About this RNA: Chemical mapping of a 177-nucleotide RNA with 2A3 and DMS. For 2A3 the reverse transcriptase was SuperScript II with manganese.
RNA sequence: GGGAACGACUCGAGUAGAGUCGAAAAAAAGAUAUGGACGAAGGACUCCAUCGAUCUAACACAGCAGCAGCUCUGUGUCGGAAACGACACAGAAGGUGUUAGGGAGGAGCCUUCGUCCUAAGUCAAAGCGUACUAUGAAGUUCGCUUCAUAGUACGCAAAAGAAACAACAACAACAAC
Reactivity to 2A3 in 0.01 (KOAc 150mM, MgCl2 10mM, bicine 150mM(pH8.5), 24C), signal-to-noise 2, nucleotides 027 to 126: a000a000a000g000a010u030a000u060g020g000a000c000g010a020a010g060g040a300c020u030c020c010a250u300c020g000a000u000c010u010a000a010c010a020c040a040g300c050a020g030c010a050g010c130u000c000u010g000u000g000u000c000g000g000a020a000a000c000g000a000c010a000c000a020g010a010a000g030g010u010g020u010u010a000g010g000g030a050g000g000a000g010c010c010u000u000c000g000u020c000c000u000a000a000g000u000c000a000a060a030
Reactivity to DMS in 0.01 (KOAc 150mM, MgCl2 10mM, bicine 150mM(pH8.5), 24C), signal-to-noise 2, nucleotides 027 to 126: a040a040a130g000a020u000a020u040g010g000a030c000g000a030a020g000g010a270c000u010c000c010a300u010c220g000a060u000c000u000a000a000c010a010c000a150g020c140a110g020c300a170g000c050u000c000u000g030u000g020u000c000g010g010a020a000a030c000g030a050c010a000c000a000g000a010a010g010g000u000g000u030u000a010g000g000g000a030g000g000a020g000c010c000u000u000c000g040u010c000c000u000a000a060g010u000c000a140a070a120
It was measured as part of the RMDB library TTRDES.
High 2A3 reactivity points to a flexible backbone, as in loops and unpaired stretches.